[RMDB]
RNA sequence: GGGAACGACUCGAGUAGAGUCGAAAAAAGUGGAUGAUGGCACCGGGGUUAUCUGGGUGCUCGGCUUCAGGGACGACACAAAGUUCGCGAAGCUCGUGAAGAAGGGCGAUCUUGUCCAGAUAAUAGGGGAUAUAAUCGCAUUCGUGCGAUUAUAUCCAAAAGAAACAACAACAACAAC
Reactivity to DMS in 0.01 (KOAc 150mM, MgCl2 10mM, bicine 150mM(pH8.5), 24C), signal-to-noise 2, nucleotides 027 to 126: a070a060g020u010g000g020a120u000g020a090u000g020g020c020a100c050c020g040g010g000g000u000u010a020u000c030u000g000g030g000u010g000c040u000c020g010g010c000u020u000c050a070g010g000g010a080c020g000a150c120a070c230a090a100a130g010u000u000c070g020c080g010a050a080g020c040u000c040g010u020g010a090a050g020a020a050g030g010g000c020g000a050u000c180u010u000g000u000c010c010a010g000a040u010a010a060u010a120g020g000

Source: RMDB library OK2TST, as collected in RNAgym. This 177-nucleotide RNA was probed chemically with DMS. For DMS the reverse transcriptase was MarathonRT. Reactivities are given for positions 27 through 126. The RNA was probed in 150 mM KOAc, 10 mM MgCl2 and 150 mM bicine (pH 8.5) at 24 C.